Overview:
The data come from the RNA Mapping Database (RMDB), library 15KLIB. Chemical mapping of a 170-nucleotide RNA with DMS and 2A3. For 2A3, 13,055 sequencing reads were counted. The reactions ran in a buffer of 150 mM KOAc, 10 mM MgCl2 and 150 mM bicine (pH 8.5), at 24 C.

[RMDB]
RNA sequence: GGGAACGACUCGAGUAGAGUCGAAAAUACCACUCAGACUGUUGAUUCCUCACAGGGUUCAGAAUACCAGUACGUUAUCUUCUGUCAAACAGCAGAUACGGCACAUGCUAACAACAUUAACAGAUUUAAGCUACGACGUUCGCGUCGUAGAAAAGAAACAACAACAACAAC
Reactivity to DMS in 0.01 (KOAc 150mM, MgCl2 10mM, bicine 150mM(pH8.5), 24C), signal-to-noise 4, nucleotides 027 to 129: u110a050c070c010a150c150u050c080a090g070a160c040u040g030u090u010g060a120u000u000c030c030u000c110a130c160a000g050g060g000u000u000c080a100g030a130a070u000a040c020c050a110g030u000a000c070g040u020u010a090u060c040u000u000c030u000g080u020c200a120a090a270c040a060g000c080a070g050a000u010a040c030g020g030c120a090c080a070u010g060c080u050a050a020c160a120a100c030a090u070u050a060a150c140a050g000a140u100u020u030a090a060g010
Reactivity to 2A3 in 0.01 (KOAc 150mM, MgCl2 10mM, bicine 150mM(pH8.5), 24C), signal-to-noise 7, nucleotides 027 to 129: u110a020c000c010a020c040u090c050a040g020a110c020u020g020u070u030g040a090u110u050c030c010u040c030a060c040a050g000g000g060u100u060c000a020g090a110a060u080a100c030c000a030g050u040a050c040g080u120u080a000u020c010u040u000c000u020g080u050c040a100a110a130c000a080g000c000a010g010a000u000a010c000g020g000c050a000c010a070u050g020c040u080a110a070c050a050a010c000a070u060u050a050a060c000a020g120a100u060u120u100a040a010g030